The record gives the reactivity of an RNA of 170 nucleotides to DMS and 2A3. For DMS, 30,830 sequencing reads were counted. DMS adducts were read by reverse transcription with MarathonRT.
RNA sequence: GGGAACGACUCGAGUAGAGUCGAAAACCUGCAGGUUGGGCACGAAGCCCCCACCGGGCGCUCCCCUCGGCAGACCGCCCAUUGGGUUCACACCCCCAGGCCGCGGGCCGGCUGUUCUUCUUUCUCUAAAACGAAUUGUUCGCAAUUCGUAAAAGAAACAACAACAACAAC
Reactivity to DMS in 0.01 (KOAc 150mM, MgCl2 10mM, bicine 150mM(pH8.5), 24C), signal-to-noise 5, nucleotides 027 to 129: c000c040u030g000c000a080g010g030u010u000g070g000g000c060a060c160g040a140a150g020c060c020c000c040c060a030c020c060g000g000g010c060g050c130u000c020c010c010c030u040c070g020g050c060a030g000a170c080c080g020c070c000c040a050u060u070g030g020g030u030u020c160a090c130a210c110c060c010c040c070a040g000g000c100c000g030c090g030g030g050c040c040g020g020c070u070g000u010u000c020u050u000c050u000u020u020c040u000c030u000a050a080a100
Reactivity to 2A3 in 0.01 (KOAc 150mM, MgCl2 10mM, bicine 150mM(pH8.5), 24C), signal-to-noise 9, nucleotides 027 to 129: c000c000u020g010c030a030g000g000u080u050g030g000g000c050a030c170g180a080a020g020c010c010c000c000c010a030c010c030g030g060g010c030g030c030u060c000c010c000c020u040c000g020g000c010a020g040a200c020c020g000c000c010c000a020u070u170g070g000g000u180u150c070a040c010a060c080c000c000c010c010a020g030g010c020c010g050c040g000g000g000c020c000g020g000c010u020g020u070u040c020u050u000c000u010u110u000c070u000c020u060a080a130a010